[RMDB]
RNA sequence: GGGAACGACUCGAGUAGAGUCGAAAAGGACUAGCUUUAUGUUGUGUUCACUAGUAAAAUGUGAGGUAGAGUAUAGAGACAGCCAGACACCGAGAAUGUUUUGAUGUUUUCGGUCACUUUGUGUGUCCAUACCUGUAUUAUUCGUAAUACAGGUAUGAAAAGAAACAACAACAACAAC
Reactivity to DMS in 0.01 (KOAc 150mM, MgCl2 10mM, bicine 150mM(pH8.5), 24C), signal-to-noise 9, nucleotides 027 to 126: g010g010a080c020u000a040g010c020u000u000u000a040u010g010u000u000g010u010g010u010u000c030a080c020u010a120g010u010a060a060a080a090u010g010u000g010a050g010g010u010a040g000a060g010u010a070u010a060g010a100g000a040c030a050g010c040c020a050g000a050c090a070c010c010g010a060g000a040a040u000g010u000u010u010u020g010a050u000g010u000u000u000u000c010g000g000u000c030a020c030u000u010u020g010u010g020u000g010u000c030
Reactivity to 2A3 in 0.01 (KOAc 150mM, MgCl2 10mM, bicine 150mM(pH8.5), 24C), signal-to-noise 9, nucleotides 027 to 126: g080g020a050c030u040a020g070c020u110u100u040a110u190g060u080u040g060u030g050u080u060c020a020c040u050a020g160u180a040a070a110a150u190g030u040g030a030g020g050u080a040g020a030g080u050a050u030a170g040a000g010a020c010a010g100c010c000a010g010a010c020a000c030c010g000a010g020a030a020u040g070u030u140u120u200g160a100u100g010u020u010u040u040c000g000g000u000c000a020c020u020u070u070g110u040g010u010g010u030c000